[RMDB]
RNA sequence: GGGAACGACUCGAGUAGAGUCGAAAAGGCAGUGGGCGAGAAGGAUGCCAACCUGCGCUACUACAACCUGGACGAGCCGCUAAAGGAGACCCAAUGGGUGGCCGGCGUUGUCAGCCAGGCCUUUGGCGAGCUACAUGACAUUCGUGUCAUGUAGCUCAAAAGAAACAACAACAACAAC
Reactivity to 2A3 in 0.01 (KOAc 150mM, MgCl2 10mM, bicine 150mM(pH8.5), 24C), signal-to-noise 1, nucleotides 027 to 126: g040g040c030a030g040u040g030g040g040c020g010a050g080a150a020g040g010a030u080g080c000c000a040a060c060c000u070g000c070g050c030u060a060c000u000a040c020a040a080c030c000u030g060g010a020c020g060a020g000c070c000g000c100u060a180a040a060g040g010a030g000a030c010c000c120a080a120u090g000g000g010u030g060g000c060c000g000g070c060g080u070u070g140u070c010a040g000c020c000a030g010g050c000c000u060u000u020g020g000c070
Reactivity to DMS in 0.01 (KOAc 150mM, MgCl2 10mM, bicine 150mM(pH8.5), 24C), signal-to-noise 2, nucleotides 027 to 126: g010g000c080a030g030u000g010g030g000c050g000a080g010a120a070g050g000a120u010g030c060c100a110a160c030c030u000g020c070g000c020u010a060c060u000a090c070a100a100c020c030u020g010g020a140c040g020a110g040c090c020g020c060u020a030a110a110g010g000a100g010a060c030c000c050a150a110u010g000g000g020u000g000g010c030c010g010g000c050g000u010u000g020u010c110a100g000c000c020a040g000g000c060c020u020u010u010g010g010c120